This 177-nucleotide RNA was probed chemically with 2A3 and DMS. Values cover nucleotides 27 to 126. The reactions ran in a buffer of 150 mM KOAc, 10 mM MgCl2 and 150 mM bicine (pH 8.5), at 24 C. For 2A3 the reverse transcriptase was SuperScript II with manganese.
RNA sequence: GGGAACGACUCGAGUAGAGUCGAAAAGAUAUGGAAGUCCAGUGGGAGCUCCUUUCGGAAACGAAAGAAGAGCGAAGAACACUGGGCUUCCUAAGUCAAAACGCGAUAGAGUUCGCUCUAUCGCGAAGUUGUGUUAAUACUUCGGUAUUAACACAACAAAAGAAACAACAACAACAAC
Reactivity to 2A3 in 0.01 (KOAc 150mM, MgCl2 10mM, bicine 150mM(pH8.5), 24C), signal-to-noise 3, nucleotides 027 to 126: g010a000u010a020u050g010g000a000a010g000u010c010c020a000g010u010g000g200g180a100g030c010u010c000c000u000u000u000c000g010g000a000a010a010c000g030a000a010a020g090a230a100g000a010g020c020g010a130a060g200a090a010c010a000c000u000g010g000g000c000u000u000c000c000u010a000a000g000u000c000a030a020a060a080c010g000c000g000a000u000a010g030a000g040u130u130c300g070c080u000c010u000a000u000c000g000c000g000a010a010
Reactivity to DMS in 0.01 (KOAc 150mM, MgCl2 10mM, bicine 150mM(pH8.5), 24C), signal-to-noise 4, nucleotides 027 to 126: g010a040u010a140u010g000g010a010a010g020u000c000c000a010g030u000g020g000g030a300g030c000u000c010c010u000u000u000c000g000g000a030a010a060c010g000a020a000a020g010a110a080g020a010g030c000g030a100a160g010a150a170c000a010c000u010g000g020g000c000u000u000c000c010u000a000a040g000u000c010a120a080a180a220c020g000c010g010a010u000a000g000a010g030u010u020c300g020c000u010c000u010a010u000c000g010c000g000a010a030